The record gives the reactivity of an RNA of 177 nucleotides to DMS and 2A3. For 2A3 the reverse transcriptase was SuperScript II with manganese. The DMS profile rests on 9,096 reads. 2A3 is a SHAPE reagent: it acylates the 2'-hydroxyl of flexible nucleotides of all four kinds. The 2A3 profile rests on 11,253 reads. For DMS the reverse transcriptase was MarathonRT. Values cover nucleotides 27 to 126.

RNA sequence: GGGAACGACUCGAGUAGAGUCGAAAAACAAAGAGAUCGAAAGAGCAAUGUGUAACUCAUGAUCCUAGCGAAUGGUUGGGCUCGAAAGAUCGAGUGUUACCAUCACAUCCCGGACGCUAGAAAAAAAACAUAAUAACAACUUCGGUUGUUAUUAUGUAAAAGAAACAACAACAACAAC
Reactivity to DMS in 0.01 (KOAc 150mM, MgCl2 10mM, bicine 150mM(pH8.5), 24C), signal-to-noise 7, nucleotides 027 to 126: a070c140a070a080a090g010a140g010a020u000c010g010a080a100a090g000a040g000c070a080a110u010g010u010g000u000a100a090c040u010c020a080u000g010a030u000c030c010u000a020g010c020g010a180a050u000g000g010u000u000g010g000g000c010u000c010g010a040a130a100g010a100u010c000g010a020g010u000g000u000u000a030c000c000a020u000c160a070c110a120u000c020c000c010g010g010a230c030g010c020u000a010g020a010a000a010a060a070a050a080
Reactivity to 2A3 in 0.01 (KOAc 150mM, MgCl2 10mM, bicine 150mM(pH8.5), 24C), signal-to-noise 6, nucleotides 027 to 126: a000c050a010a090a010g130a000g010a040u040c020g090a080a170a120g020a000g020c040a050a090u170g060u040g040u110a080a040c010u000c030a040u130g020a020u010c010c010u010a010g010c010g050a070a020u020g040g010u030u040g050g040g000c000u010c010g080a130a150a080g180a170u070c010g000a020g000u120g250u120u040a030c000c010a010u040c020a020c010a080u030c010c010c000g010g030a010c000g010c030u020a010g000a090a030a010a000a000a000a000